[RMDB]
RNA sequence: GGGAACGACUCGAGUAGAGUCGAAAAAACAAUGCAGGAUUGGGGGCAACUUCCUCAACCGAAGCAGUAGGGAUCACUUUGUAUCAGUGAUGUCUGGCCUCAACAUCGUCUACGGCUUGUUGAUAAGUCAACUAUAUCUGUUCGCAGAUAUAGUUGAAAAAGAAACAACAACAACAAC
Reactivity to 2A3 in 0.01 (KOAc 150mM, MgCl2 10mM, bicine 150mM(pH8.5), 24C), signal-to-noise 5, nucleotides 027 to 126: a000a000c090a040a030u090g020c020a030g000g120a270u020u030g020g010g000g000g010c050a110a070c050u170u080c010c010u020c010a000a020c010c010g060a090a020g000c020a000g050u130a020g000g010g030a010u020c000a020c060u060u080u220g190u130a110u160c060a030g030u000g040a020u020g300u010c040u040g060g050c010c010u030c010a030a050c010a050u110c010g130u030c040u110a050c050g060g000c060u030u050g030u000u030g050a070u050a170a010g070
Reactivity to DMS in 0.01 (KOAc 150mM, MgCl2 10mM, bicine 150mM(pH8.5), 24C), signal-to-noise 7, nucleotides 027 to 126: a070a040c080a090a060u010g030c030a120g010g000a130u010u000g020g010g010g000g010c160a100a100c230u010u000c010c010u000c060a040a040c080c060g010a100a080g010c040a060g010u000a050g010g010g000a020u000c020a030c030u000u010u000g020u010a090u000c190a030g010u000g010a020u000g000u000c020u000g010g000c020c020u000c050a070a060c060a040u000c080g010u010c050u010a080c130g010g010c060u000u000g010u000u000g000a080u000a070a090g010